[RMDB]
An RNA of 177 nucleotides, treated with DMS and 2A3 and read out base by base. It was measured as part of the RMDB libraries RFM100 and RFMREP. For DMS the reverse transcriptase was MarathonRT.
RNA sequence: GGGAACGACUCGAGUAGAGUCGAAAAAAGGCCGGUUCGGUUGAUUCGUCCAUGAGGACGAGGAUAAGGGUAGAACGUCUUACUAGCACUAGGACGAUAAUGACCCGAAAGGCAACCUUCAAAUGCUGCAUAUCACGUCUUUCGAGACGUGAUAUGCAAAAGAAACAACAACAACAAC
Reactivity to DMS in 0.01 (KOAc 150mM, MgCl2 10mM, bicine 150mM(pH8.5), 24C), signal-to-noise 2, nucleotides 027 to 126: a020a080g010g020c050c060g010g010u010u050c120g000g000u000u000g000a180u090u010c000g000u000c000c050a270u020g000a180g000g010a000c000g040a010g040g000a200u000a080a170g000g000g000u000a010g000a210a100c010g000u000c000u000u020a000c030u000a220g010c300a230c300u000a040g000g000a000c000g030a030u010a030a130u040g000a040c010c000c000g000a000a050a010g000g000c000a030a010c040c040u000u000c100a030a170a120u010g040c110u040
Reactivity to 2A3 in 0.01 (KOAc 150mM, MgCl2 10mM, bicine 150mM(pH8.5), 24C), signal-to-noise 1, nucleotides 027 to 126: a000a000g170g000c010c000g030g040u180u150c060g070g000u030u150g010a010u070u000c000g070u000c000c000a120u300g130a250g030g000a000c020g030a050g010g000a010u030a150a180g100g000g000u010a070g010a300a010c000g000u000c000u020u010a000c030u040a000g050c040a060c030u020a020g000g000a030c030g000a030u070a150a170u140g000a010c000c000c000g000a000a000a000g030g000c000a000a000c020c000u060u110c080a070a120a070u040g080c150u030